[RMDB]
RNA sequence: GGGAACGACUCGAGUAGAGUCGAAAACGUAUCUAAAACGAAGGUUAGGGGAUGUGAGAACAGUGAAACCUUCUACAUGAGAAGAAGAGACUGGGAAGGAUAGGAACUUCUCAACUGUAUCCGUAUCAAUGGUGUACGCAUAAGGAGAAGUAGAAGACUGUAAGAUGUGGUUCGCCACAUCUUACAGAAAAGAAACAACAACAACAAC
Reactivity to DMS in 0.01 (KOAc 150mM, MgCl2 10mM, bicine 150mM(pH8.5), 24C), signal-to-noise 1, nucleotides 027 to 156: c070g050u000a020u050c060u000a060a070a090a060c090g070a160a060g010g050u000u000a070g010g030g000g050a050u000g030u010g000a050g000a140a030c060a110g030u000g030a090a070a110c070c040u000u000c030u010a110c110a030u010g010a180g020a060a090g030a070a020g010a040g000a120c060u000g010g020g000a120a020g000g010a200u020a120g000g000a110a070c010u000u010c040u000c010a020a030c080u000g030u000a010u010c030c000g000u010a040u000c050a100a070u020g030g050u000g010u010a010c020g000c090a040u010a050a030g010g030a000g010a050a060g040u000a160g000a080a040g000a090
Reactivity to 2A3 in 0.01 (KOAc 150mM, MgCl2 10mM, bicine 150mM(pH8.5), 24C), signal-to-noise 3, nucleotides 027 to 156: c040g030u070a070u090c080u110a060a060a010a110c030g040a040a020g030g010u010u060a040g040g020g020g010a040u050g060u050g020a070g010a060a020c040a050g030u050g120a040a040a050c020c000u060u040c000u040a040c030a110u170g040a040g020a080a040g020a060a010g010a010g060a040c040u040g000g030g010a010a010g030g000a020u060a070g060g030a050a040c000u010u010c000u010c020a090a170c030u060g050u080a020u030c060c020g000u030a050u160c060a130a170u180g080g000u060g020u010a020c030g000c020a020u020a050a050g040g000a030g000a040a020g010u040a030g020a040a000g040a050

Annotation: This 207-nucleotide RNA was probed chemically with DMS and 2A3. DMS adducts were read by reverse transcription with MarathonRT. For DMS, 2,058 sequencing reads were counted. The reactions ran in a buffer of 150 mM KOAc, 10 mM MgCl2 and 150 mM bicine (pH 8.5), at 24 C. The data come from the RNA Mapping Database (RMDB), library OK3TST.